[RMDB]
RNA sequence: GGGAACGACUCGAGUAGAGUCGAAAAGCGAGGCGGAGAUCGAGCGCCACUACGUGCGCGGCGACCUGAAGUUGCUUCGGCUUCUUCUUGUUCGCUUCAUGCGUGGAACGGCUCCUUCUUCACACCAGCCGGAGUAUGAAACUACCCGGUGGAUACACAAAGAUUUAUCGUUCGCGAUAAAUCUUUGAAAAGAAACAACAACAACAAC
Reactivity to DMS in 0.01 (KOAc 150mM, MgCl2 10mM, bicine 150mM(pH8.5), 24C), signal-to-noise 4, nucleotides 027 to 156: g010c030g000a040g010g010c000g020g020a080g000a040u000c010g000a080g010c010g020c030c030a160c040u010a050c060g030u010g030c040g020c070g010g030c010g010a050c020c010u020g010a060a070g030u000u000g010c010u010u010c300g080g000c020u000u000c000u010u000c020u010u000g000u010u000c020g000c000u000u000c020a070u010g020c030g010u000g000g000a100a120c090g030g000c000u010c020c020u000u000c020u000u000c010a110c030a030c010c010a300g000c020c010g010g020a220g010u010a060u000g000a200a140a120c020u000a160c000c020c010g020g000u010g000g020a180u010a110c100a220
Reactivity to 2A3 in 0.01 (KOAc 150mM, MgCl2 10mM, bicine 150mM(pH8.5), 24C), signal-to-noise 7, nucleotides 027 to 156: g130c080g040a070g080g070c090g010g010a010g000a020u030c020g000a010g010c030g060c030c010a050c020u050a010c010g040u030g010c070g000c060g050g000c000g000a000c000c000u000g000a010a010g010u000u010g000c000u040u100c240g120g000c000u000u000c020u010u000c000u010u040g110u190u030c000g000c000u010u020c010a040u100g010c000g000u010g010g010a130a100c070g090g000c000u000c000c010u010u010c000u010u020c020a060c030a030c040c020a020g050c010c000g000g010a110g020u030a040u140g200a190a090a070c070u010a010c010c000c010g010g010u030g020g050a110u140a120c090a010